About this RNA:
This 177-nucleotide RNA was probed chemically with 2A3. The reactions ran in a buffer of 150 mM KOAc, 10 mM MgCl2 and 150 mM bicine (pH 8.5), at 24 C.
RNA sequence: GGGAACGACUCGAGUAGAGUCGAAAAACGCGUCAGUACGCUGACGCGAAAUGAGAUGAAAUUAGCGUUUGGAUAUGCGAUUUUACGUUGAUUUCAUCUCAUGAACAGUGCGUUACGACGCACUGAAUGCAGCCUGAUACUUCGGUAUCAGGCUGCAAAAAGAAACAACAACAACAAC
Reactivity to 2A3 in 0.01 (KOAc 150mM, MgCl2 10mM, bicine 150mM(pH8.5), 24C), signal-to-noise 2, nucleotides 027 to 126: a000c020g000c000g020u000c000a000g060u080a040c140g070c060u000g000a000c000g000c000g000a000a000a000u010g000a000g000a000u000g000a000a000a000u030u030a000g000c030g000u160u200u170g160g030a030u030a020u220g260c270g040a180u000u030u110u210a000c000g000u000u020g000a000u000u000u000c000a000u000c000u030c000a000u000g000a020a020c000a000g010u000g020c000g000u000u050a070c300g000a000c000g000c000a020c000u000g000a070a000